[RMDB]
RNA sequence: GGGAACGACUCGAGUAGAGUCGAAAAUCUGGCGGCAGCUAUGAAUACUUCCAGGGUAUGGGUAUGGGUGAUUUAAUCACCAAUAUCGUUAAAGUUGACGACAACACGGUGCGCUUCGAACUGGCACUGCUUCAUGCCAGUUCGCUGGCAUGAAGCAAAAAGAAACAACAACAACAAC
Reactivity to DMS in 0.01 (KOAc 150mM, MgCl2 10mM, bicine 150mM(pH8.5), 24C), signal-to-noise 4, nucleotides 027 to 126: u000c050u010g010g010c050g000g020c060a040g010c030u020a030u010g000a130a050u010a050c060u010u010c070c080a110g010g000g020u000a040u000g020g010g000u000a020u000g010g000g020u000g000a020u000u000u010a100a070u000c010a020c000c000a040a030u010a020u000c020g010u000u000a080a080a090g010u000u000g000a060c030g000a040c060a040a070c110a070c130g000g020u000g000c060g020c060u010u000c080g010a060a050c060u000g000g000c060a050c150
Reactivity to 2A3 in 0.01 (KOAc 150mM, MgCl2 10mM, bicine 150mM(pH8.5), 24C), signal-to-noise 2, nucleotides 027 to 126: u040c060u050g060g000c000g000g010c010a020g000c040u070a060u300g110a120a020u050a110c000u090u000c060c030a010g050g100g000u050a060u080g110g010g000u040a020u010g080g000g000u010g010a020u000u140u300a120a060u030c000a010c000c020a000a010u020a020u030c040g000u000u090a080a050a080g040u100u110g020a050c030g000a020c000a060a020c010a060c080g040g000u030g020c040g020c050u050u040c080g050a060a040c020u030g070g000c030a030c110

Structure probing data (DMS and 2A3) for a 177-nucleotide construct. In probing experiments dimethyl sulfate is read out at A N1 and C N3, which are open when not base-paired. The DMS profile rests on 5,130 reads.